[RMDB]
Source information: The data come from the RNA Mapping Database (RMDB), library OK3TST. The record gives the reactivity of an RNA of 207 nucleotides to 2A3. The reactions ran in a buffer of 150 mM KOAc, 10 mM MgCl2 and 150 mM bicine (pH 8.5), at 24 C. The 2A3 profile rests on 557 reads. 2A3 adducts were read by reverse transcription with SuperScript II with manganese.
RNA sequence: GGGAACGACUCGAGUAGAGUCGAAAACUGUGGAACGCCUACUCAUGCACUCUUUAUCCCUGACCUUAACCAUAAGGAUUAGGCAAGGAGGAAUGUGGCGCAAUCGGUAGAGAAACCACAACAUAACAUCUACAGUAGGCGCACCUUCCUCCCUACAGGUCGGGUAAUGAUUCGUCAUUACCCGACCAAAAGAAACAACAACAACAAC
Reactivity to 2A3 in 0.01 (KOAc 150mM, MgCl2 10mM, bicine 150mM(pH8.5), 24C), signal-to-noise 1, nucleotides 027 to 156: c060u020g020u090g140g000a140a070c110g010c020c000u010a020c000u040c030a030u120g000c040a060c000u060c040u000u040u060a090u070c060c000c000u010g070a010c010c000u160u040a170a110c000c000a130u050a220a190g050g000a190u090u150a010g030g020c070a090a060g000g010a020g010g030a060a000u140g010u030g140g010c000g000c050a000a170u090c060g060g000u020a020g000a000g030a020a070a040c110c100a130c070a030a190c050a130u180a070a090c050a120u060c010u030a020c020a050g030u090a090g080g060c000g010c000a050c000c000u000u020c010c000u070c000c000c000u060a060c110a060